Structure probing data (2A3 and DMS) for a 177-nucleotide construct. For 2A3 the reverse transcriptase was SuperScript II with manganese. For DMS the reverse transcriptase was MarathonRT. The data come from the RNA Mapping Database (RMDB), libraries RFM100 and RFMREP. The reactions ran in a buffer of 150 mM KOAc, 10 mM MgCl2 and 150 mM bicine (pH 8.5), at 24 C.
RNA sequence: GGGAACGACUCGAGUAGAGUCGAAAACACUGCCCAAAAAUGUCCAAAGACGCCAAUGGGUAGAACAGGGAUUGUCGGAUUAAGGCUUUCCAUAAUGUGGCUAAGAGUAAUUCUUUACGUUGUAUAGCAUAUUGCUCAUAUUCGUAUGAGCAAUAUGAAAAGAAACAACAACAACAAC
Reactivity to 2A3 in 0.01 (KOAc 150mM, MgCl2 10mM, bicine 150mM(pH8.5), 24C), signal-to-noise 7, nucleotides 027 to 126: c020a010c010u010g000c000c000c000a030a000a010a000a000u020g000u000c020c020a210a060a100g020a010c010g000c000c000a030a030u010g000g000g000u010a020g020a030a030c050a070g020g070g030a040u020u020g030u020c020g050g080a120u160u190a130a060g020g010c010u010u020u000c000c000a030u170a110a110u140g090u080g090g020c060u060a070a000g030a010g060u160a180a150u160u020c030u090u110u050a060c070g020u020u030g040u050a090u100a070g050
Reactivity to DMS in 0.01 (KOAc 150mM, MgCl2 10mM, bicine 150mM(pH8.5), 24C), signal-to-noise 9, nucleotides 027 to 126: c090a200c020u000g000c000c000c000a010a020a070a120a130u010g010u000c000c150a090a110a220g000a030c020g010c020c030a060a200u010g000g010g010u000a020g010a080a100c140a100g000g000g000a040u000u010g010u010c030g010g010a160u020u030a090a110g000g000c020u000u000u000c020c010a060u020a070a070u010g010u010g010g010c080u010a030a050g010a050g010u010a070a070u020u000c040u000u000u010a060c130g000u010u000g010u000a110u010a090g000